Conditions: 150 mM KOAc, 10 mM MgCl2 and 150 mM bicine (pH 8.5), 24 C. Structure probing data (2A3 and DMS) for a 177-nucleotide construct.
RNA sequence: GGGAACGACUCGAGUAGAGUCGAAAAGAGCUGAUUGCGCACAGCAGCACCGCGCCCGCCCCGAAGGCGAGCCGCCGUGCGUCGAUCAUCAUUUUGACCAGCGGCACCACCGGCACCCCGAAGGGGGUCCGUGGAUUAGGUUCGCCUAAUCCACGGAAAAAGAAACAACAACAACAAC
Reactivity to 2A3 in 0.01 (KOAc 150mM, MgCl2 10mM, bicine 150mM(pH8.5), 24C), signal-to-noise 2, nucleotides 027 to 126: g070a030g000c070u030g020a100u020u100g030c020g040c000a030c010a070g010c010a010g020c010a050c070c060g030c020g030c030c000c010g070c000c020c000c070g120a090a000g020g000c010g010a010g000c000c000g030c020c030g030u040g000c000g110u140c060g040a010u030c010a020u030c070a100u080u080u050u110g030a040c010c030a040g000c000g050g000c030a010c050c010a030c010c000g050g010c050a060c000c020c000c030g050a070a090g110g010g000g000g000
Reactivity to DMS in 0.01 (KOAc 150mM, MgCl2 10mM, bicine 150mM(pH8.5), 24C), signal-to-noise 4, nucleotides 027 to 126: g010a110g020c120u000g010a020u000u000g010c030g000c010a060c020a060g020c000a070g010c040a090c160c130g000c060g030c010c010c020g000c080c040c020c130g020a160a190g010g010c020g010a080g010c010c050g020c000c050g030u000g000c060g000u000c050g010a020u000c040a020u020c120a160u000u000u010u000g000a090c040c030a170g010c050g020g010c050a060c060c050a070c050c020g010g000c110a090c040c010c000c030g010a130a130g000g030g010g010g000

Source: RMDB library OK2TRN, as collected in RNAgym. The 2A3 profile rests on 2,556 reads.